RNA sequence: GGGAACGACUCGAGUAGAGUCGAAAAGCCAUGGCCGCAGCCGAGCGCCACAUUCUGGACACUCUUGGCUGGAAGGGAGAAGGUUUGAUAGCGGCAGCCGAGAGCUCAAGUGCAACGGAUGGGAUCACGGAAGACAUGUAUUCGUACAUGUCUUCCGAAAAGAAACAACAACAACAAC
Reactivity to 2A3 in 0.01 (KOAc 150mM, MgCl2 10mM, bicine 150mM(pH8.5), 24C), signal-to-noise 2, nucleotides 027 to 126: g000c020c010a060u090g030g000c040c000g030c040a000g000c020c030g050a050g000c030g050c020c000a050c000a050u140u070c030u140g020g040a020c010a030c040u050c040u070u060g030g010c020u030g040g060a070a050g080g050g030a100g020a090a050g120g000u110u240u160g150a120u100a040g060c060g040g010c010a000g020c010c010g030a050g020a000g030c010u020c080a110a100g040u090g050c030a070a010c040g000g040a030u040g010g060g000a030u080c040a000
Reactivity to DMS in 0.01 (KOAc 150mM, MgCl2 10mM, bicine 150mM(pH8.5), 24C), signal-to-noise 4, nucleotides 027 to 126: g020c020c020a120u000g010g010c040c040g020c030a090g000c030c040g000a090g020c200g020c040c020a040c120a050u010u010c050u000g010g000a110c140a110c050u000c040u000u000g030g020c000u010g000g020a120a090g010g010g000a080g000a160a080g000g000u010u000u010g020a150u000a110g000c040g010g000c030a040g020c030c020g000a030g010a030g010c150u000c080a070a070g010u000g020c040a080a140c080g010g010a070u010g000g010g010a100u010c070a210
Conditions: 150 mM KOAc, 10 mM MgCl2 and 150 mM bicine (pH 8.5), 24 C. The record gives the reactivity of an RNA of 177 nucleotides to 2A3 and DMS. It was measured as part of the RMDB library OK2TRN. 2A3 adducts were read by reverse transcription with SuperScript II with manganese.